[RMDB]
RNA sequence: GGGAACGACUCGAGUAGAGUCGAAAAUAUGUCAUUAUUAGUGAAAAAUUGUUUGUGCGUAGUAAGGAAGAAGACGGAUUUGCCUUCUACCCUGCUUGCACUAAUGGUCAUGCUGUACCGACUCUCUCCAGAUAUCAUUCUUCGGAAUGAUAUCUGGAAAAGAAACAACAACAACAAC
Reactivity to 2A3 in 0.01 (KOAc 150mM, MgCl2 10mM, bicine 150mM(pH8.5), 24C), signal-to-noise 2, nucleotides 027 to 126: u200a060u110g030u020c010a010u020u160a050u040u160a050g040u030g070a060a020a050a080a060u130u080g060u070u020u020g010u010g000c020g020u010a000g010u030a030a030g000g000a000a000g010a010a020g020a000c090g090g140a200u050u080u300g020c010c000u000u000c000u000a010c010c010c010u000g020c010u000u010g000c010a010c000u000a000a000u010g030g000u010c010a040u140g000c020u020g010u040a030c010c020g030a020c020u000c000u000c000u010
Structure probing data (2A3) for a 177-nucleotide construct. The RNA was probed in 150 mM KOAc, 10 mM MgCl2 and 150 mM bicine (pH 8.5) at 24 C.